[RMDB]
RNA sequence: GGGAACGACUCGAGUAGAGUCGAAAAAGCGCUGGAGGUACGCCUCCAGCGCAGAGUGUUAUGAUGAUGGAGUCUUGUGCUCUUAGUCUAGCUCUGGUCUACCGCUAGGAUUUCGGUCCUAGCGGAACGACGCAUGAUGUUUCGACAUCAUGCGUCGAAAAGAAACAACAACAACAAC
Reactivity to 2A3 in 0.01 (KOAc 150mM, MgCl2 10mM, bicine 150mM(pH8.5), 24C), signal-to-noise 5, nucleotides 027 to 126: a000g000c020g000c000u000g000g020a010g010g020u050a060c270g080c020c000u000c010c010a010g000c000g000c000a000g000a000g000u100g060u170u180a130u220g020a000u010g010a050u250g040g010a040g010u040c090u210u280g090u300g060c000u000c000u010u050a000g000u000c030u050a020g000c000u000c010u040g100g010u020c030u050a090c010c000g000c000u010a000g000g000a000u000u000u140c260g110g000u020c020c000u000a000g000c000g000g000a000a000
Reactivity to DMS in 0.01 (KOAc 150mM, MgCl2 10mM, bicine 150mM(pH8.5), 24C), signal-to-noise 2, nucleotides 027 to 126: a060g020c000g040c000u020g020g010a030g020g060u010a060c300g010c010c000u010c000c000a000g000c010g030c020a000g000a010g020u000g000u010u010a040u020g000a030u000g000a060u020g000g000a030g000u000c050u010u010g010u070g000c010u010c000u000u000a300g000u000c020u000a110g010c010u000c000u020g000g000u000c020u000a170c000c020g010c000u000a000g000g000a010u000u000u050c210g010g000u000c010c000u000a000g020c000g010g000a030a050